Structure probing data (DMS and 2A3) for a 177-nucleotide construct. DMS adducts were read by reverse transcription with MarathonRT.

[RMDB]
RNA sequence: GGGAACGACUCGAGUAGAGUCGAAAACUGUUGAACGUAUCAUAUGUCAUAUGUCAGACGGCUUUGGCAACGGGUAUAAUCAUGUUAAGAGUGAUUGGCAAACAUUGCUUAAGAAUCCAAUUUUAGCGUCCUUAAGAUGGUUCGCCAUCUUAAGGACAAAAGAAACAACAACAACAAC
Reactivity to DMS in 0.01 (KOAc 150mM, MgCl2 10mM, bicine 150mM(pH8.5), 24C), signal-to-noise 3, nucleotides 027 to 126: c030u020g020u010u000g010a120a090c050g020u000a000u000c050a080u000a090u000g020u010c180a040u000a050u010g020u000c160a160g000a050c130g000g020c020u000u000u010g000g010c020a020a040c120g000g020g010u000a050u000a020a050u000c030a000u000g000u020u010a120a180g000a090g000u010g020a030u010u010g000g000c080a090a060a070c100a040u020u000g010c040u000u010a030a070g000a080a110u010c040c040a110a100u020u000u010u000a100g010c300
Reactivity to 2A3 in 0.01 (KOAc 150mM, MgCl2 10mM, bicine 150mM(pH8.5), 24C), signal-to-noise 2, nucleotides 027 to 126: c010u030g020u100u090g040a100a040c020g040u030a050u050c040a080u070a080u300g120u090c030a010u000a020u170g000u030c030a010g000a140c020g030g000c000u010u020u040g000g040c020a020a030c070g020g000g090u080a040u030a130a060u020c020a000u060g010u150u160a130a040g150a010g080u020g020a030u020u020g050g000c010a050a070a050c030a160u020u080g000c000u050u030a060a010g020a020a060u030c030c030a110a110u190u020u040u100a060g020c080